[RMDB]
RNA sequence: GGGAACGACUCGAGUAGAGUCGAAAAGGGCACAGAGUUGCAGUUGAUUGAAACUAAAUCAUGUGCGCUAAGUUGUCCCGAAAGUAUCUUUGGAUUUCUACAAAACAGUGUUCCUUCUUUAGGAUGCCAUCUUCCUGCACUUCGGUGCAGGAAGAUGAAAAGAAACAACAACAACAAC
Reactivity to 2A3 in 0.01 (KOAc 150mM, MgCl2 10mM, bicine 150mM(pH8.5), 24C), signal-to-noise 4, nucleotides 027 to 126: g030g010g000c040a020c020a010g200a000g080u120u300g050c010a070g040u040u030g020a070u040u080g080a080a050a040c100u100a120a120a020u040c010a000u090g090u010g140c050g000c000u000a010a000g120u160u060g060u110c000c010c000g030a010a030a020g090u080a030u090c040u030u130u090g030g000a030u100u300u000c010u070a030c030a040a070a060a040c020a030g000u000g010u050u010c010c000u080u080c040u070u130u140a030g030g020a020u080g040c010
Reactivity to DMS in 0.01 (KOAc 150mM, MgCl2 10mM, bicine 150mM(pH8.5), 24C), signal-to-noise 2, nucleotides 027 to 126: g000g030g020c040a010c010a060g000a160g020u000u020g040c050a030g040u000u000g000a200u010u020g000a080a090a040c130u020a070a050a000u000c050a040u000g000u000g000c000g010c050u000a080a100g050u030u030g000u030c050c000c000g050a100a040a040g000u000a030u010c070u000u010u000g000g000a050u000u010u040c070u000a090c060a070a100a000a050c290a050g030u010g000u000u000c000c000u000u000c080u000u000u010a020g000g000a050u070g000c140